[RMDB]
RNA sequence: GGGAACGACUCGAGUAGAGUCGAAAACAGCAGGUGGAUGAGGAGUUUCUGAGGAGUGACCACCCAGCCAUCCUUCGGUCCCAGGCCCGCUUGCCUGGGUUCCAUGGCCUCCGAUCUCCCCUGGACACCAGCUCCGUCCUCUAUACUGCCGUGCAGCCGAAUAGAUGCUAUUCGUAGCAUCUAUUCGAAAAGAAACAACAACAACAAC
Reactivity to DMS in 0.01 (KOAc 150mM, MgCl2 10mM, bicine 150mM(pH8.5), 24C), signal-to-noise 4, nucleotides 027 to 156: c040a070g000c020a040g000g030u000g000g010a100u000g010a160g000g020a080g010u000u000u000c030u010g010a070g010g020a130g030u000g010a140c010c020a080c090c070c070a110g000c030c010a050u000c020c050u000u000c110g020g000u010c010c020c070a070g020g010c010c060c210g010c150u000u000g030c030c020u010g010g010g010u000u010c020c020a080u000g010g010c020c020u000c030c040g010a120u000c020u010c030c000c000c020u000g020g010a130c040a060c030c000a070g020c010u000c040c000g000u000c010c010u000c050u000a150u000a040c030u010g010c010c060g020u000g000c040a130g000c090
Reactivity to 2A3 in 0.01 (KOAc 150mM, MgCl2 10mM, bicine 150mM(pH8.5), 24C), signal-to-noise 6, nucleotides 027 to 156: c040a010g020c010a020g000g000u030g010g060a090u070g030a070g030g010a020g010u060u120u070c080u070g070a060g020g020a050g010u080g080a100c060c010a060c020c030c000a020g030c020c010a070u130c030c020u200u180c070g020g000u040c000c000c010a000g020g000c000c050c090g180c220u160u250g000c000c000u010g000g000g000u000u040c000c000a010u020g030g000c000c010u020c010c040g020a070u000c000u000c010c000c010c000u010g010g050a010c010a040c050c030a020g010c010u000c030c010g100u030c000c010u000c010u020a070u040a190c020u050g010c020c020g050u080g030c020a020g040c040
Chemical mapping of a 207-nucleotide RNA with DMS and 2A3. The 2A3 profile rests on 5,420 reads. It was measured as part of the RMDB library OK3TST. The reactions ran in a buffer of 150 mM KOAc, 10 mM MgCl2 and 150 mM bicine (pH 8.5), at 24 C.